[RMDB]
RNA sequence: GGGAACGACUCGAGUAGAGUCGAAAAUUUACGGUAUUCGUACCGUAAACGAGCAAGCAAGCAGCGGAACGAGACAAGACGAUAAUAAGAUCGAGCAUGCUGAUAGUAGGAUCUUCGGAUCCUACAAUUACAUUAACAUCUUCGGAUGUUAAUGUAAAAAAGAAACAACAACAACAAC
Reactivity to DMS in 0.01 (KOAc 150mM, MgCl2 10mM, bicine 150mM(pH8.5), 24C), signal-to-noise 9, nucleotides 027 to 126: u000u000u000a000c010g000g000u000a020u010u010c190g030u000a010c000c000g010u000a000a010a030c120g010a120g010c100a090a100g010c060a080a070g010c040a040g010c040g010g000a070a070c090g010a080g000a080c090a050a070g000a090c060g010a060u000a070a070u000a090a100g010a070u000c030g000a090g020c040a070u000g010c050u010g000a080u000a070g010u000a000g000g010a010u000c000u000u010c190g020g000a010u000c000c000u000a000c000a030a080
Reactivity to 2A3 in 0.01 (KOAc 150mM, MgCl2 10mM, bicine 150mM(pH8.5), 24C), signal-to-noise 8, nucleotides 027 to 126: u010u000u000a000c000g000g000u010a030u020u090c190g040u030a040c000c000g000u000a000a000a010c040g020a040g060c050a080a000g010c010a050a020g000c020a010g030c010g050g020a060a020c030g030a030g040a090c040a050a050g060a030c060g040a040u060a190a060u120a180a100g100a130u040c030g020a010g050c040a030u080g020c030u050g040a070u070a100g000u000a000g000g010a000u000c010u030u050c240g050g010a000u000c000c000u000a000c000a000a000